[RMDB]
RNA sequence: GGGAACGACUCGAGUAGAGUCGAAAAGACCUCCGCCGAGGUAGUCUGUGAGGUAGAGCGACCGAUUGGUGUGUCCGCCUCCGAGAGGAGUCGGCCCUCCUGUCAAACUCCAAACUUACAGACGCUGUUUGACGCGGGGAUUCCGGUGCGCGGGGUAGCGUAUGUAUAUGUUCGCAUAUACAUACGCAAAAGAAACAACAACAACAAC
Reactivity to 2A3 in 0.01 (KOAc 150mM, MgCl2 10mM, bicine 150mM(pH8.5), 24C), signal-to-noise 3, nucleotides 027 to 156: g050a020c000c000u030c020c020g000c020c010g050a040g040g000u120a200g010u040c010u010g000u000g000a010g020g030u100a020g010a020g010c070g050a070c150c060g020a070u010u060g010g000u020g020u020g020u030c010c010g000c010c000u000c000c000g020a030g010a030g010g000a010g000u010c010g000g000c000c000c000u000c000c000u010g000u010c020a010a060a060c010u000c010c010a240a210a130c010u000u010a000c000a000g000a000c010g000c000u020g060u020u150u160g010a010c020g000c010g000g000g020g020a010u110u000c020c000g020g040u130g030c100g000c060g020g020g010g030u060a040
Reactivity to DMS in 0.01 (KOAc 150mM, MgCl2 10mM, bicine 150mM(pH8.5), 24C), signal-to-noise 1, nucleotides 027 to 156: g020a130c030c000u000c040c010g040c030c000g070a140g010g030u010a040g060u010c010u020g020u000g030a050g030g040u000a040g000a060g030c000g000a230c130c120g000a060u000u000g000g000u000g000u000g030u000c020c000g000c040c000u000c020c000g010a300g000a260g000g020a050g020u000c030g000g000c040c030c020u010c020c000u000g030u020c010a080a210a020c010u010c010c000a070a070a150c010u000u010a150c010a070g000a050c010g010c020u000g000u020u000u000g020a060c130g020c060g010g000g000g000a160u000u000c020c000g020g020u000g000c060g070c060g000g000g000g020u000a180

Source: RMDB library PDB130, as collected in RNAgym.
An RNA of 207 nucleotides, treated with 2A3 and DMS and read out base by base.
Reactivities are given for positions 27 through 156.
For DMS the reverse transcriptase was MarathonRT.
For DMS, 3,597 sequencing reads were counted.
For 2A3, 3,518 sequencing reads were counted.
DMS (dimethyl sulfate) methylates the pairing face of unpaired adenines and cytosines.